[RMDB]
RNA sequence: GGGAACGACUCGAGUAGAGUCGAAAAAGCGUAGCGGUACGCCGCUACGCAAGGCGCAUUUGAACUGUAUUGUACGCCUUGCAUAAAGCAAAAGUACUAAAAAAACGGGCCGUUACGACGGCACGAAAAAACAUCCAUUGGUUCGCCAAUGGAUGAAGCAAAUACUGUUGUUCGCAACAGUAUUUGCAAAAGAAACAACAACAACAAC
Reactivity to 2A3 in 0.01 (KOAc 150mM, MgCl2 10mM, bicine 150mM(pH8.5), 24C), signal-to-noise 6, nucleotides 027 to 156: a000g020c000g000u000a000g000c010g010g000u040a040c240g040c040c000g010c000u000a000c000g000c000a000a010g010g000c000g000c040a090u080u110u250g170a210a120c100u130g090u190a090u160u090g020u030a030c010g000c000c000u000u010g000c040a070u160a250a160a040g010c010a000a040a050a020g060u080a060c120u210a040a040a050a040a010a020a060c010g000g020g000c000c000g000u020u050a060c260g010a000c000g060g000c020a000c010g020a020a030a010a000a010a010c000a000u000c000c000a000u000u010g020g000u040u040c190g030c100c000a000a010u000g010g000a000u000g000a010a000
Reactivity to DMS in 0.01 (KOAc 150mM, MgCl2 10mM, bicine 150mM(pH8.5), 24C), signal-to-noise 1, nucleotides 027 to 156: a080g010c020g020u010a060g000c010g000g060u000a050c270g070c050c000g050c000u000a020c030g000c010a000a000g010g010c000g010c000a090u000u000u000g040a080a210c100u020g000u000a300u000u000g060u010a000c000g000c030c010u000u000g020c000a100u000a060a140a080g040c060a060a090a080a140g020u000a180c080u020a000a000a100a070a070a050a200c030g060g040g000c010c000g020u020u000a060c080g070a030c010g010g010c000a000c020g000a000a000a070a110a070a120c000a000u000c000c000a020u000u000g030g000u000u010c300g040c040c000a020a000u000g020g000a000u000g030a020a150